[RMDB]
RNA sequence: GGGAACGACUCGAGUAGAGUCGAAAAGAAGAGAAAGGAGACACAAGGACAGUCUCCAGAGGUUCCUAAGGCCUCGAUCGCGCCUGCCGGGAAUCAUGGACCCCCGGUUGUCCAUGACAGAAGAAGAGGGCCAUAUAAUAUUCGUAUUAUAUGGCCCAAAAGAAACAACAACAACAAC
Reactivity to DMS in 0.01 (KOAc 150mM, MgCl2 10mM, bicine 150mM(pH8.5), 24C), signal-to-noise 4, nucleotides 027 to 126: g000a120a110g000a150g020a040a120a070g010g000a040g000a020c000a090c190a180a150g020g010a140c190a110g000u000c020u000c000c000a020g010a120g000g000u000u010c020c040u010a110a100g000g010c010c020u010c090g000a070u020c100g010c190g010c000c000u000g030c040c040g000g000g000a050a120u000c030a060u010g000g000a050c010c060c020c040c090g020g010u040u020g000u010c010c020a010u000g000a030c150a050g010a080a130g010a070a100g010a280
Reactivity to 2A3 in 0.01 (KOAc 150mM, MgCl2 10mM, bicine 150mM(pH8.5), 24C), signal-to-noise 1, nucleotides 027 to 126: g060a060a020g140a000g040a020a130a000g050g000a070g010a000c050a000c030a210a080g200g010a050c080a050g030u000c000u000c000c000a000g000a000g000g000u060u160c000c010u130a090a060g050g000c000c000u000c030g000a050u080c030g020c040g000c010c000u000g000c000c000g000g000g060a010a140u090c020a030u040g030g020a030c000c000c000c090c000g060g000u040u050g000u000c000c000a000u000g000a050c080a070g080a040a030g080a130a030g100a200